Conditions: 150 mM KOAc, 10 mM MgCl2 and 150 mM bicine (pH 8.5), 24 C. Chemical mapping of a 207-nucleotide RNA with 2A3 and DMS. Values cover nucleotides 27 to 156. The data come from the RNA Mapping Database (RMDB), library OK3TST. For 2A3, 2,646 sequencing reads were counted.
RNA sequence: GGGAACGACUCGAGUAGAGUCGAAAAUCUGGGUGCAAGGAGAGGCGGACCUCGUUCUGGGCACCACUACGGAGGCCUAUCAGGAACGUUUCCUGUCGAUGGUUGACACGUUGCGUCAGCACGGCGUGGAAGCACCCGUUUACAUUUCGGUCGCAUCGGAGUAUCAAUCAUUCGUGAUUGAUACUCCAAAAGAAACAACAACAACAAC
Reactivity to 2A3 in 0.01 (KOAc 150mM, MgCl2 10mM, bicine 150mM(pH8.5), 24C), signal-to-noise 4, nucleotides 027 to 156: u050c050u070g030g000g000u000g020c010a000a010g000g020a080g020a030g020g030c070g030g050a110c000c010u000c040g010u050u020c040u100g030g010g000c030a040c040c040a020c060u140a030c100g020g030a080g020g070c000c000u060a110u170c100a070g000g110a040a000c000g000u000u000u020c010c000u000g010u000c020g080a200u050g130g000u020u000g020a030c010a010c130g250u240u220g080c120g020u020c010a010g000c030a010c010g000g000c060g050u030g000g000a020a000g010c010a010c000c030c000g000u020u030u030a070c030a020u070u080u080c020g020g030u050c040g030c090a110u160c110
Reactivity to DMS in 0.01 (KOAc 150mM, MgCl2 10mM, bicine 150mM(pH8.5), 24C), signal-to-noise 2, nucleotides 027 to 156: u000c030u000g010g030g040u000g050c050a100a100g010g000a120g010a080g010g010c010g000g010a150c010c000u000c050g030u000u010c060u000g020g050g030c020a110c000c000a080c050u010a060c090g020g020a140g030g000c000c010u000a070u010c070a080g000g020a050a150c090g000u000u000u000c020c000u000g000u000c020g040a110u020g050g010u000u000g000a070c000a050c080g000u020u000g030c010g040u000c030a050g010c050a290c000g010g020c010g020u010g010g000a090a130g020c020a180c000c000c050g000u010u000u000a070c170a220u010u000u000c040g010g010u010c060g040c050a160u000c100